[RMDB]
RNA sequence: GGGAACGACUCGAGUAGAGUCGAAAACACACCUGGCUCAUUUUUGUGUUUUCAGUAGAGAUGGGGUUUCACCAUGUUGGCCAGGCUGGUUUCAAACUCCUGACCUCAGGUGAUCCACCUGCCUUAGACUCCCAAAGUGCUGGGAAUACAGGUGUGAAUUGCUUACAAUGUUCGCAUUGUAAGCAAUAAAAGAAACAACAACAACAAC
Reactivity to DMS in 0.01 (KOAc 150mM, MgCl2 10mM, bicine 150mM(pH8.5), 24C), signal-to-noise 2, nucleotides 027 to 156: c010a040c010a020c030c020u000g020g030c070u030c120a130u010u000u000u000u020g040u010g020u000u000u000u010c030a090g020u000a120g000a050g020a050u010g020g000g020g020u000u000u000c010a030c010c020a100u010g000u000u000g000g000c020c020a030g020g000c040u000g040g030u010u000u010c120a140a090a080c010u000c000c010u000g010a070c020c010u000c030a090g020g030u010g010a030u000c010c020a030c020c000u000g000c040c030u000u000a120g000a080c050u000c000c010c020a060a070a100g020u020g020c040u000g010g000g010a070a060u000a040c020a040g000g020u000g010u010g020a060
Reactivity to 2A3 in 0.01 (KOAc 150mM, MgCl2 10mM, bicine 150mM(pH8.5), 24C), signal-to-noise 3, nucleotides 027 to 156: c020a010c000a010c000c010u010g080g000c050u060c130a150u120u070u080u110u220g070u030g010u050u000u010u010c020a020g020u040a020g020a030g010a160u070g020g010g000g010u020u030u010c020a010c010c030a100u070g070u100u040g130g000c010c000a010g000g000c090u050g000g040u120u240u150c170a210a170a070c020u020c000c000u000g020a040c000c010u020c020a010g000g000u020g020a000u000c000c010a160c100c020u010g000c000c010u040u010a060g020a040c070u060c010c010c000a000a060a000g120u120g030c040u010g000g000g040a030a000u080a020c010a010g000g000u000g000u000g020a030